RNA sequence: GGGAACGACUCGAGUAGAGUCGAAAAUGUGACAUCCAUCACCCCACUGAUCUCCAGCGUUGAUUCAGCUGAUCAGUGGGCUGAGCAGGUGUCCCCUUUCUCCCUCACCAUUCCAUGUGCGUUCCUCGAUUAUCAGUGGGUUCGCCCACUGAUAAUCAAAAGAAACAACAACAACAAC
Reactivity to DMS in 0.01 (KOAc 150mM, MgCl2 10mM, bicine 150mM(pH8.5), 24C), signal-to-noise 3, nucleotides 027 to 126: u000g010u000g020a010c010a010u000c010c050a300u000c000a020c300c000c000c010a000c000u000g000a010u000c040u020c280c160a030g020c070g020u010u010g010a190u010u010c030a120g040c020u010g000a060u010c010a000g010u000g010g000g020c100u000g010a030g000c210a090g010g000u000g010u000c000c020c040c060u000u000u020c060u000c000c000c010u000c060a080c050c080a080u010u010c050c060a050u010g030u000g020c030g000u000u000c000c000u010c210
Reactivity to 2A3 in 0.01 (KOAc 150mM, MgCl2 10mM, bicine 150mM(pH8.5), 24C), signal-to-noise 2, nucleotides 027 to 126: u120g030u060g000a010c020a010u000c010c000a030u000c020a000c000c000c000c000a000c000u010g010a000u030c070u120c140c090a000g000c030g080u080u080g130a240u250u130c080a040g000c020u010g010a010u000c000a000g000u000g020g000g000c010u000g020a020g030c050a010g040g000u010g000u020c040c000c000c020u000u070u020c080u000c030c000c000u030c010a040c030c010a080u120u020c040c010a040u140g040u050g080c020g020u040u010c020c000u050c050